[RMDB]
RNA sequence: GGGAACGACUCGAGUAGAGUCGAAAAUCAAUCGCAUUGUUGGGUGAAAGUUGGAGGAUAAAUCCUCACCAAGAUUUAAAUUAAGCAAGAGAUAUAAUGCCGCUCCUUAUAUUGCGACUUGCUUAAAGAUAUCCGGCAAAGUUCGCUUUGCCGGAAACUAAGUAAUACGGUUCGCCGUAUUACUUAGAAAAGAAACAACAACAACAAC
Reactivity to DMS in 0.01 (KOAc 150mM, MgCl2 10mM, bicine 150mM(pH8.5), 24C), signal-to-noise 1, nucleotides 027 to 156: u010c010a050a050u000c100g050c070a110u000u010g030u000u020g000g000g030u010g000a050a060a090g000u000u000g000g000a080g000g040a190u000a080a120a160u000c020c000u000c070a050c050c010a060a130g000a130u000u010u000a030a140a210u010u010a010a040g020c000a020a030g000a300g000a050u000a020u000a040a040u000g020c060c120g070c130u000c060c060u000u000a020u000a070u000u000g000c060g000a090c030u000u000g000c000u000u000a000a040a090g000a180u000a060u000c010c000g020g000c000a010a020a020g030u000u000c300g040c040u000u000u000g020c010c010g000g010a010a000a030
Reactivity to 2A3 in 0.01 (KOAc 150mM, MgCl2 10mM, bicine 150mM(pH8.5), 24C), signal-to-noise 2, nucleotides 027 to 156: u100c030a000a050u120c010g010c100a050u050u080g050u000u090g020g000g040u060g050a160a040a070g100u140u130g040g000a010g000g000a020u140a130a130a090u110c010c000u030c010a000c000c020a010a010g010a070u100u160u300a030a130a110u100u020a010a010g000c010a020a000g000a000g010a010u010a030u030a100a050u100g050c090c050g060c050u120c000c000u000u120a020u030a020u060u050g030c050g090a100c010u000u020g010c000u010u020a000a020a000g050a010u080a030u120c000c000g000g020c000a010a010a010g020u040u060c110g000c140u000u000u000g000c000c000g000g020a000a000a010